[RMDB]
RNA sequence: GGGAACGACUCGAGUAGAGUCGAAAAGUACCACGAUUUCGUCCUCACGAAGCACGCGACGAACUCGCCCGAGGAACGGACCGUCCUCCGGCCAGUCGACUCGCUCGGCCACUGCGAGACGGACCGGCUACGGAGUAAUGUUCGCAUUACUCCGUAGAAAAGAAACAACAACAACAAC
Reactivity to 2A3 in 0.01 (KOAc 150mM, MgCl2 10mM, bicine 150mM(pH8.5), 24C), signal-to-noise 7, nucleotides 027 to 126: g050u050a050c010c010a040c060g030a050u030u050u050c010g020u010c020c010u090c020a080c110g180a100a050g050c100a030c140g040c070g010a030c020g010a050a040c010u000c020g050c010c030c030g050a080g050g070a110a050c010g020g030a020c020c010g010u050c010c040u010c000c010g030g000c060c010a020g020u060c010g050a070c040u060c180g050c060u020c030g040g000c010c020a060c050u090g030c100g020a030g010a010c010g000g000a020c010c000g030g000
Reactivity to DMS in 0.01 (KOAc 150mM, MgCl2 10mM, bicine 150mM(pH8.5), 24C), signal-to-noise 9, nucleotides 027 to 126: g020u000a160c080c070a270c080g010a060u010u000u000c010g010u000c030c030u010c130a130c110g010a120a120g010c110a080c120g020c100g010a040c040g000a040a060c060u000c100g010c030c030c060g000a110g010g000a090a100c020g010g000a080c040c030g000u000c030c010u000c010c060g000g000c020c050a040g000u000c030g000a070c070u000c130g000c080u000c050g010g000c010c270a090c090u000g010c070g010a030g010a040c000g000g000a070c030c000g010g000
An RNA of 177 nucleotides, treated with 2A3 and DMS and read out base by base. The data come from the RNA Mapping Database (RMDB), library OK2TRN. The DMS profile rests on 14,002 reads. The reactions ran in a buffer of 150 mM KOAc, 10 mM MgCl2 and 150 mM bicine (pH 8.5), at 24 C. 2A3 adducts were read by reverse transcription with SuperScript II with manganese. In probing experiments dimethyl sulfate is read out at A N1 and C N3, which are open when not base-paired.